[RMDB]
RNA sequence: GGGAACGACUCGAGUAGAGUCGAAAAGAUAUGGAGUGGACCGGAAUUAAACACAGGUCGGAAACGACCUGGUUUGGAGAUGGUCGUAACAUCUCCUAAGUCAAAGGGAUGCGUUCGCGCAUCCCAAUCGAUCAAUAAACUUCGGUUUAUUGAUCGAAAAAGAAACAACAACAACAAC
Reactivity to 2A3 in 0.01 (KOAc 150mM, MgCl2 10mM, bicine 150mM(pH8.5), 24C), signal-to-noise 4, nucleotides 027 to 126: g020a000u060a050u110g010g010a010g020u040g030g000a000c010c030g000g080a070a140u250u100a100a060a020c260a030c000a300g020g000u000c020g030g020a040a040a010c010g000a000c010c000u000g030g000u020u020u070g040g020a090g010a020u060g030g010u020c010g040u080a070a020c020a210u090c010u000c000c010u030a120a030g070u040c050a100a080a140g030g010g000a000u010g010c010g010u030u070c300g000c020g000c100a010u020c000c000c000a010a000
Reactivity to DMS in 0.01 (KOAc 150mM, MgCl2 10mM, bicine 150mM(pH8.5), 24C), signal-to-noise 5, nucleotides 027 to 126: g010a040u000a250u010g000g010a030g040u000g010g010a020c010c000g010g020a230a140u000u000a020a020a010c020a110c000a010g000g010u000c000g010g000a070a070a170c010g000a010c000c000u010g000g000u000u000u000g010g010a090g000a300u010g000g000u000c030g020u000a070a160c160a050u010c000u010c000c000u000a030a120g010u010c050a080a100a130g000g000g000a010u000g010c020g000u000u010c260g020c010g020c000a010u000c000c000c010a000a020